[RMDB]
RNA sequence: GGGAACGACUCGAGUAGAGUCGAAAAAAAUGACAGUGUUCUCGUUUUAUACUUGAAGAAACAAACAGAUUUGCACAAGGUCCUCAGCUACUAAAUGGUAGAGCUGAGACUGAACCCAGACAGUUUGGUUCCAGAGCUGAGAGAGGAGUGAAAGAGAGUAUAGUACUGGUUUCGACCAGUACUAUACAAAAGAAACAACAACAACAAC
Reactivity to 2A3 in 0.01 (KOAc 150mM, MgCl2 10mM, bicine 150mM(pH8.5), 24C), signal-to-noise 7, nucleotides 027 to 156: a000a000a010u150g010a020c050a040g040u010g040u120u040c040u010c020g040u060u060u070u100a150u070a090c050u070u090g050a110a040g040a050a160a020c070a040a050a020c040a060g080a230u070u100u150g030c040a030c020a110a050g030g010u080c040c020u000c010a010g040c010u060a120c010u100a230a180a280u300g140g000u090a050g010a020g060c010u010g000a010g010a010c010u020g000a000a010c000c020c010a020g030a050c030a020g030u040u080u080g040g010u050u000c010c010a010g000a010g050c040u060g020a000g010a010g010a020g080g010a030g010u080g030a020a060a020g080a000g010a000
Reactivity to DMS in 0.01 (KOAc 150mM, MgCl2 10mM, bicine 150mM(pH8.5), 24C), signal-to-noise 3, nucleotides 027 to 156: a030a070a040u000g010a090c070a080g010u000g010u000u000c010u010c050g040u000u020u000u000a110u010a090c060u000u000g010a130a090g010a070a040a040c050a050a040a150c040a140g000a180u000u000u000g010c010a060c060a050a300g020g000u000c060c010u000c010a020g020c020u000a120c040u000a010a080a120u000g020g020u000a050g010a080g020c000u000g010a040g000a040c020u000g000a050a050c030c020c020a230g030a150c110a130g010u010u000u020g020g020u000u000c020c010a140g020a140g020c000u010g040a070g010a100g000a070g010g020a080g030u000g010a090a040a090g000a140g000a240

Source information: An RNA of 207 nucleotides, treated with 2A3 and DMS and read out base by base. For DMS, 6,560 sequencing reads were counted. Source: RMDB library OK3TST, as collected in RNAgym.